[RMDB]
RNA sequence: GGGAACGACUCGAGUAGAGUCGAAAACGCCGAUGCGGUGCGGAUCAGAGGACCCGUGCACGAUCGCGGUGACCUCGUGGUUCUGCAGGUUCCACGCGUUGACGAUCUCCGCCAACCGGGUGUGGUCCGGACCACACAGGUUCGCCUGUGUGGUCCGAAAAGAAACAACAACAACAAC
Reactivity to 2A3 in 0.01 (KOAc 150mM, MgCl2 10mM, bicine 150mM(pH8.5), 24C), signal-to-noise 1, nucleotides 027 to 126: c010g040c040c020g030a060u050g060c110g070g160u030g000c000g000g010a010u000c010a030g020a040g010g030a110c050c000c000g030u020g000c130a130c300g100a230u180c020g000c030g000g050u120g030a150c000c020u030c030g170u060g000g030u060u010c020u150g040c010a010g000g090u000u050c020c010a010c010g020c020g090u050u070g020a010c020g020a040u010c050u000c090c000g000c000c010a030a110c040c000g050g000g010u070g020u040g050g090u000c020
Reactivity to DMS in 0.01 (KOAc 150mM, MgCl2 10mM, bicine 150mM(pH8.5), 24C), signal-to-noise 2, nucleotides 027 to 126: c030g000c030c030g010a060u010g020c010g000g020u010g060c040g010g000a010u020c020a210g000a060g030g030a260c050c000c040g020u000g020c080a120c130g030a090u010c010g040c000g030g000u010g000a090c030c020u000c010g020u010g000g000u000u000c030u010g020c050a090g000g010u000u020c050c060a150c060g000c150g000u000u010g010a120c060g000a140u000c060u000c060c040g020c030c080a070a050c070c060g000g020g000u000g020u000g000g020u000c080